Structure probing data (2A3) for a 177-nucleotide construct.
2A3 adducts were read by reverse transcription with SuperScript II with manganese.
For 2A3, 252 sequencing reads were counted.
The RNA was probed in 150 mM KOAc, 10 mM MgCl2 and 150 mM bicine (pH 8.5) at 24 C.
It was measured as part of the RMDB library OK1LIB.
[RMDB]
RNA sequence: GGGAACGACUCGAGUAGAGUCGAAAAUGUCCGCAAUAACUCGUUUCACAGCUACCUCUCUACCAUCAAAUUUACCUCUGUAAAUCAAACUCGAGUUACGUGUGAAAUUCCAAAACUUUCAAAAAUACGCAGCGGUAUGGUUCGCCAUACCGCUGCGAAAAGAAACAACAACAACAAC
Reactivity to 2A3 in 0.01 (KOAc 150mM, MgCl2 10mM, bicine 150mM(pH8.5), 24C), signal-to-noise 1, nucleotides 027 to 126: u210g030u010c010c000g000c010a050a070u210a110a000c000u000c000g130u040u130u040c110a110c000a030g000c000u040a030c050c000u180c000u040c010u030a000c060c060a040u160c110a010a170a100u150u070u300a300c040c040u160c000u170g000u070a000a000a050u140c040a040a160a120c000u000c000g000a000g040u040u000a000c040g070u160g000u030g110a000a000a080u010u050c000c000a000a000a020a000c010u000u110u170c130a050a050a050a000a000u100a000